Overview
This 177-nucleotide RNA was probed chemically with DMS and 2A3. DMS adducts were read by reverse transcription with MarathonRT. For 2A3 the reverse transcriptase was SuperScript II with manganese.
RNA sequence: GGGAACGACUCGAGUAGAGUCGAAAAAGGGCUGGAUUCGUCCAGCCCUGCACAUUCGUACGCAACGAAGCGUACGUCAAUACGCAAAUGACGUAAAGCGUAGAACCACGGACUUCGGUCCGUGGAACGAUGUACUGUAGUUCGCUACAGUACAUCGAAAAGAAACAACAACAACAAC
Reactivity to DMS in 0.01 (KOAc 150mM, MgCl2 10mM, bicine 150mM(pH8.5), 24C), signal-to-noise 9, nucleotides 027 to 126: a010g010g000g010c000u000g010g010a030u000u010c180g010u000c000c000a010g010c000c000c000u000g000c120a080c140a160u010u010c020g000u000a010c000g030c020a110a140c300g000a150a110g010c010g000u000a000c000g000u010c210a070a100u000a010c030g000c020a060a080a080u010g000a100c160g010u000a050a070a130g000c010g000u000a030g010a110a180c010c000a010c000g000g000a020c000u000u010c160g020g010u000c000c000g020u000g000g000a010a030
Reactivity to 2A3 in 0.01 (KOAc 150mM, MgCl2 10mM, bicine 150mM(pH8.5), 24C), signal-to-noise 9, nucleotides 027 to 126: a000g010g000g000c000u010g000g000a030u040u050c160g050u020c060c000a000g000c000c000c000u000g000c000a020c000a090u080u080c010g000u010a010c000g000c060a200a100c220g220a200a060g000c000g000u000a010c000g000u000c000a050a120u070a030c010g000c020a040a090a240u230g120a070c080g100u140a070a050a050g020c010g000u010a030g030a080a040c000c000a000c000g000g000a000c000u060u070c240g080g000u000c000c000g000u000g000g000a000a000
It was measured as part of the RMDB library M2PK50. Values cover nucleotides 27 to 126.